[RMDB]
RNA sequence: GGGAACGACUCGAGUAGAGUCGAAAAUAGUUCAUCUACGCGGUGAGCAUAAGGCGUAACGGAUGGGAAAGCAUGCCAUGCCACCUGGAUGGGAAAGCAUGCAGACUACCUGUCACCGUAAUAUGCCAUCCGAAACGUACGGCCAUCCGAAACGUACACUUUAAGUAAGAUUCGUCUUACUUAAAGUAAAAGAAACAACAACAACAAC
Reactivity to 2A3 in 0.01 (KOAc 150mM, MgCl2 10mM, bicine 150mM(pH8.5), 24C), signal-to-noise 9, nucleotides 027 to 156: u130a010g060u020u040c020a060u020c060u080a070c120g020c110g040g010u020g020a080g010c020a050u100a150a080g030g000c020g010u020a070a040c020g030g000a020u030g020g010g030a070a070a000g010c010a000u010g000c010c010a100u220g100c010c010a100c050c120u150g150g040a200u060g040g000g010a060a050a000g010c000a000u000g000c010a010g040a050c070u130a140c040c070u100g050u080c020a030c070c040g020u020a040a060u100a070u120g040c010c000a010u010c010c000g020a070a080a020c030g010u040a020c020g020g000c020c010a040u040c030c010g050a110a060a020c040g000u050a040c020
Reactivity to DMS in 0.01 (KOAc 150mM, MgCl2 10mM, bicine 150mM(pH8.5), 24C), signal-to-noise 4, nucleotides 027 to 156: u000a060g030u000u000c030a040u000c030u000a060c080g000c070g010g030u000g020a100g040c020a130u010a040a170g020g020c000g020u010a080a200c010g000g020a080u000g010g000g000a160a180a300g010c020a020u000g000c020c020a150u000g010c040c020a070c020c040u000g020g010a090u010g010g020g000a180a180a070g030c000a010u000g010c000a090g020a250c020u000a120c020c030u000g010u000c060a080c050c020g020u000a050a120u000a060u010g010c000c010a010u000c030c020g020a050a080a080c050g000u000a020c020g000g010c040c040a060u000c040c040g010a040a110a090c020g020u000a070c100